[RMDB]
RNA sequence: GGGAACGACUCGAGUAGAGUCGAAAAGAUAUGGAGUCCCGCCCUAUGGGAGUCUCGGGUUCUUCGGAAACGAAGAAUCUCUAGCGUGGACGAAGAACAUAGUAACAAGGACUCCUAAGUCAAAAGCGAUAUCACUACUUCGGUAGUGAUAUCGCAACAUCCUCCUCAAGUUCGCUUGAGGAGGAUGAAAAGAAACAACAACAACAAC
Reactivity to 2A3 in 0.01 (KOAc 150mM, MgCl2 10mM, bicine 150mM(pH8.5), 24C), signal-to-noise 3, nucleotides 027 to 156: g020a010u070a050u120g000g010a000g000u000c010c020c020g040c060c020c000u020a020u040g000g010g010a040g000u020c010u030c060g000g000g000u020u000c010u020u000c020g020g010a050a060a020c020g000a000a000g000a020a020u010c070u010c050u060a130g110c070g200u300g060g020a010c010g140a130a020g000a020a010c000a000u040a000g080u190a130a110c120a160a050g000g000a000c000u000c000c000u010a040a000g040u030c030a070a020a060a060g000c000g000a000u000a000u020c000a000c000u020a000c000u030u110c270g040g000u000a000g000u010g000a000u000a000u000c000g000c000a000a000
Reactivity to DMS in 0.01 (KOAc 150mM, MgCl2 10mM, bicine 150mM(pH8.5), 24C), signal-to-noise 1, nucleotides 027 to 156: g020a110u000a110u030g000g010a050g000u000c000c000c000g000c300c120c030u000a000u000g020g000g030a290g000u000c010u000c020g010g020g030u010u000c000u000u000c000g020g020a180a190a300c010g010a030a070g010a000a020u000c000u000c050u000a120g000c110g000u000g010g010a130c050g000a120a160g030a110a190c020a070u000a070g000u010a080a100c130a140a110g000g010a040c000u000c010c000u010a040a130g010u000c010a120a050a160a280g000c000g000a040u000a000u000c000a000c000u000a000c000u000u010c300g050g010u000a010g010u000g010a000u000a000u000c010g000c000a000a000

An RNA of 207 nucleotides, treated with 2A3 and DMS and read out base by base.
DMS adducts were read by reverse transcription with MarathonRT.
The reactions ran in a buffer of 150 mM KOAc, 10 mM MgCl2 and 150 mM bicine (pH 8.5), at 24 C.
Values cover nucleotides 27 to 156.